[RMDB]
RNA sequence: GGGAACGACUCGAGUAGAGUCGAAAAACAUGGUCAACUGAUGGAGGGUUUAAACAAUAUACCACAUAUGUUUUCUCUUAUUUCUCUCAAAGAGGGUCUAUCUUUGACCCUAAUAGUCCUGUGAAUGAAGUAACAGGUACUGACAUCAAGUAGAGACGUUAAACACUUCUUUCGAGAAGUGUUUAACAAAAGAAACAACAACAACAAC
Reactivity to DMS in 0.01 (KOAc 150mM, MgCl2 10mM, bicine 150mM(pH8.5), 24C), signal-to-noise 2, nucleotides 027 to 156: a050c050a110u010g000g000u000c030a060a120c040u000g010a070u000g020g000a150g000g000g010u000u010u000a060a060a120c060a080a150u000a080u010a110c020c040a050c040a150u000a080u000g000u000u000u000u000c010u010c010u000u010a110u010u010u000c000u000c010u010c020a070a070a090g000a060g040g050g050u000c010u000a070u020c150u000u000u010g020a040c020c000c020u000a050a060u000a100g010u000c010c000u010g000u000g010a120a300u000g020a090a090g010u000a190a000c010a030g030g010u000a040c020u000g020a080c070a140u000c140a030a130g030u000a050g000a050g000a050c230
Reactivity to 2A3 in 0.01 (KOAc 150mM, MgCl2 10mM, bicine 150mM(pH8.5), 24C), signal-to-noise 4, nucleotides 027 to 156: a000c030a030u060g000g000u050c020a040a030c050u060g010a030u050g010g010a030g030g010g000u030u080u090a040a080a010c050a060a030u300a020u050a200c040c030a050c060a080u190a060u070g020u010u020u050u010c030u010c000u040u070a100u020u180u030c040u000c000u010c050a130a060a010g110a070g010g020g000u000c010u030a130u070c050u130u140u110g000a010c000c000c010u010a020a010u020a000g000u000c000c000u000g000u000g020a020a080u210g050a070a010g010u020a010a000c010a020g020g060u070a010c000u020g030a020c010a090u080c050a090a050g050u120a010g120a010g000a030c030
Chemical mapping of a 207-nucleotide RNA with DMS and 2A3.
For DMS, 3,181 sequencing reads were counted.
Reactivities are given for positions 27 through 156.
The RNA was probed in 150 mM KOAc, 10 mM MgCl2 and 150 mM bicine (pH 8.5) at 24 C.
The 2A3 profile rests on 2,964 reads.
Source: RMDB library OK3TST, as collected in RNAgym.